[RMDB]
RNA sequence: GGGAACGACUCGAGUAGAGUCGAAAAUAAAAAUGAAUUAUAGUUUAAACGCCUUCGAGCUUAGAGCUUCUGGAUGGAAUCCCCAGUCCAGACUAAUACGUAAGAGGUUUUUUUUUAUUUGUGUGUGAUUGAAUGACUAAUUCGUUAGUCAUUCAAUAAAAGAAACAACAACAACAAC
Reactivity to 2A3 in 0.01 (KOAc 150mM, MgCl2 10mM, bicine 150mM(pH8.5), 24C), signal-to-noise 2, nucleotides 027 to 126: u120a010a040a050a000a020u040g020a020a050u250u150a120u190a160g060u070u090u160a140a170a010c030g030c020c000u060u100c040g020a040g000c000u010u030a010g010a010g120c020u050u000c000u050g000g010a000u010g000g030a140a090u100c050c000c000c000a010g100u000c000c000a000g020a000c000u090a080a110u110a100c030g060u030a030a020g020a050g020g020u000u020u000u000u000u000u000u040u020a050u010u080u040g020u000g020u000g000u020g100
Reactivity to DMS in 0.01 (KOAc 150mM, MgCl2 10mM, bicine 150mM(pH8.5), 24C), signal-to-noise 3, nucleotides 027 to 126: u010a000a030a030a030a050u010g000a070a060u020u020a120u030a140g000u020u020u010a080a120a130c180g010c020c000u010u000c040g000a300g000c060u010u000a050g000a130g010c100u020u020c000u000g020g020a040u010g010g010a160a150u050c100c090c000c020a260g000u000c000c000a000g000a050c040u000a030a070u000a080c050g010u020a070a090g000a070g010g010u000u000u000u000u000u000u000u000u000a020u020u010u000g010u010g010u010g010u010g000
Source information
An RNA of 177 nucleotides, treated with 2A3 and DMS and read out base by base. 2A3 is a SHAPE reagent: it acylates the 2'-hydroxyl of flexible nucleotides of all four kinds. The reactions ran in a buffer of 150 mM KOAc, 10 mM MgCl2 and 150 mM bicine (pH 8.5), at 24 C. The data come from the RNA Mapping Database (RMDB), libraries RFM100 and RFMREP.